[RMDB]
RNA sequence: GGGAACGACUCGAGUAGAGUCGAAAAGAGUUGCAUACUCGAAUUCGUAUCUUCAAUCUGACUAUUGCGAAACUACAGACAUCCUAGUCUAUAGAUAUAUUACCAUACCGCAGAGACCUUCAACAAGAACCAGAGAAUUCUUCGGAAUUCUCUGGUUAAAAGAAACAACAACAACAAC
Reactivity to 2A3 in 0.01 (KOAc 150mM, MgCl2 10mM, bicine 150mM(pH8.5), 24C), signal-to-noise 4, nucleotides 027 to 126: g060a030g040u100u180g130c030a030u060a060c000u000c050g020a030a060u140u060c010g040u050a260u060c010u050u160c040a080a110u000c030u100g060a110c040u100a130u120u120g050c050g070a130a050a000c000u060a030c030a030g060a050c000a080u090c020c090u080a020g010u010c010u070a080u050a030g030a010u040a020u040a020u180u130a100c050c000a080u050a050c070c000g020c030a010g000a020g030a110c020c050u110u130c070a020a030c020a090a110g100
Reactivity to DMS in 0.01 (KOAc 150mM, MgCl2 10mM, bicine 150mM(pH8.5), 24C), signal-to-noise 2, nucleotides 027 to 126: g010a020g000u000u030g000c060a200u010a010c000u010c000g020a030a080u000u000c000g010u000a060u000c010u010u030c060a060a090u100c060u010g020a050c070u000a000u000u000g010c010g090a090a100a040c080u000a030c070a010g000a040c030a040u020c170c050u010a070g010u000c030u030a020u000a000g000a060u020a060u000a030u000u040a050c100c060a120u000a060c150c030g000c070a010g000a120g000a120c020c040u020u000c230a020a070c220a150a100g040